RNA sequence: GGGAACGACUCGAGUAGAGUCGAAAAUAGUAAGUAGGAUUCUCAUAAGGAAUCAUUUCCACUAUGAAUCUAGUCACUAAAUAAACACAAUUAGCUACUGUGUGUAAUAGUGAGUGUUGAUAACACAUACGUAUCAUCGUUUCGACGAUGAUACGUAAAAAGAAACAACAACAACAAC
Reactivity to 2A3 in 0.01 (KOAc 150mM, MgCl2 10mM, bicine 150mM(pH8.5), 24C), signal-to-noise 3, nucleotides 027 to 126: u070a040g110u090a180a060g050u030a020g150g040a020u000u020c070u030c080a100u110a060a080g030g010a000a020u040c010a050u060u100u050c030c030a000c020u030a020u140g080a030a030u020c040u070a040g090u030c000a010c000u000a020a020a030u020a000a050a000c020a000c010a010a080u050u060a050g030c050u130a030c020u050g010u000g000u000g010u050a020a040u000a020g010u020g030a010g030u050g000u020u030g120a220u110a170a000c010a000c000a040
Reactivity to DMS in 0.01 (KOAc 150mM, MgCl2 10mM, bicine 150mM(pH8.5), 24C), signal-to-noise 5, nucleotides 027 to 126: u000a020g010u020a100a200g000u050a050g000g000a000u000u010c000u000c040a110u110a170a300g000g000a000a010u000c020a060u020u010u000c070c070a130c030u000a020u000g020a090a100u010c020u010a050g000u000c000a010c000u000a000a010a080u010a060a120a000c000a000c010a000a040u010u000a200g000c190u040a110c090u000g000u010g000u000g000u000a100a200u000a020g020u000g000a040g010u010g000u000u000g010a090u030a010a030c040a010c100a140